[RMDB]
RNA sequence: GGGAACGACUCGAGUAGAGUCGAAAAGAUAUGGAGAGGAGGUGCCAGAUGUUGUCGGAAACGACAAUACAUCGGUCAACCUCCCUCUCCUAAGUCCAAAAGCCGGGAUCGUUCGCGAUCCCGGCAACAUAAGGUAAGUGUUCGCACUUACCUUAUGAAAAGAAACAACAACAACAAC
Reactivity to 2A3 in 0.01 (KOAc 150mM, MgCl2 10mM, bicine 150mM(pH8.5), 24C), signal-to-noise 3, nucleotides 027 to 126: g030a020u170a030u250g000g000a000g000a010g010g020a000g000g010u010g050c030c040a040g020a040u010g010u020u020g000u010c010g010g040a100a110a110c020g000a000c010a020a030u240a070c020a000u010c010g000g020u110c050a030a040c010c000u000c020c000c020u010c000u000c000c000u010a010a010g050u050c020c000a080a140a090a160g000c010c000g000g000g020a020u020c020g010u150u210c300g010c000g220a000u010c000c010c000g000g010c000a000a010
Reactivity to DMS in 0.01 (KOAc 150mM, MgCl2 10mM, bicine 150mM(pH8.5), 24C), signal-to-noise 6, nucleotides 027 to 126: g000a110u000a210u000g010g010a020g020a050g010g010a040g010g050u000g010c010c010a150g020a020u010g020u000u000g010u000c000g010g000a140a110a240c000g020a020c000a020a090u010a080c040a020u000c010g000g000u010c120a190a030c000c000u000c130c040c030u000c000u000c000c000u010a040a110g000u000c010c040a160a140a160a150g010c000c000g000g010g010a010u000c010g020u000u010c280g020c030g000a010u000c000c010c000g010g010c000a000a010
Structure probing data (2A3 and DMS) for a 177-nucleotide construct.
It was measured as part of the RMDB library TTRDES.
The 2A3 profile rests on 11,615 reads.
For DMS the reverse transcriptase was MarathonRT.
The reactions ran in a buffer of 150 mM KOAc, 10 mM MgCl2 and 150 mM bicine (pH 8.5), at 24 C.
Reactivities are given for positions 27 through 126.